Chemical mapping of a 207-nucleotide RNA with 2A3. Conditions: 150 mM KOAc, 10 mM MgCl2 and 150 mM bicine (pH 8.5), 24 C.
RNA sequence: GGGAACGACUCGAGUAGAGUCGAAAAAUCAGAGGGCGCUAUCAUGCAAACUAGGAUUGUCUGCUCAUGCACAGAACCAACUACCGAUAACUAACAGUGCAUGAAGGUUAUUUAUUCCAUAUUAAUUAAAACUCGUAAUUCUUCGGAAUUACGAGAAGAUCAGGUGACAGUUCGCUGUCACCUGAUCAAAAGAAACAACAACAACAAC
Reactivity to 2A3 in 0.01 (KOAc 150mM, MgCl2 10mM, bicine 150mM(pH8.5), 24C), signal-to-noise 2, nucleotides 027 to 156: a000u030c020a020g000a020g040g000g010c050g000c050u070a060u300c090a100u230g000c020a000a000a040c000u010a010g040g000a050u030u070g040u060c050u070g070c040u000c020a000u000g000c030a010c000a020g090a090a030c060c000a070a070c020u120a100c060c070g130a060u060a140a080c010u050a050a070c070a100g000u000g000c010a010u010g010a000a010g010g010u050u020a060u130u060u020a110u110u070c040c000a050u080a140u210u140a100a110u080u120a080a070a060a140c000u000c000g000u000a000a000u030u000c020u010u070c140g020g000a000a000u000u000a000c010g000a000g000a000a010